[RMDB]
RNA sequence: GGGAACGACUCGAGUAGAGUCGAAAAAUCCUCUGGCUGUACCCAUUUAUUCAUUAUCAGUUGAUUUAAGCUGUUAGAACCAACUUUGGUUAGGAGGAUAGAGAGUAGUUUUAAUGCUCUUCUCUUACAGGUUUGGUUUUUCUCUUUUCCUUGAUUACGAUAGGCACGUAUUCGUACGUGCCUAUCGAAAAGAAACAACAACAACAAC
Reactivity to 2A3 in 0.01 (KOAc 150mM, MgCl2 10mM, bicine 150mM(pH8.5), 24C), signal-to-noise 1, nucleotides 027 to 156: a000u060c030c000u090c070u020g070g000c050u040g090u170a150c020c040c040a090u090u160u290a090u070u130c050a060u040u120a050u070c020a030g100u040u040g060a150u030u050u040a060a000g000c010u030g000u110u040a010g000a030a000c000c000a050a040c020u200u110u120g090g000u200u030a050g060g010a000g000g000a030u110a030g130a000g010a000g020u070a010g020u000u070u210u300a130a010u140g000c000u020c000u060u000c000u020c000u000u050a010c040a010g000g020u030u070u030g120g000u030u020u000u100u050c040u010c050u010u020u010u030c020c000u060u120g100a210u220u170a070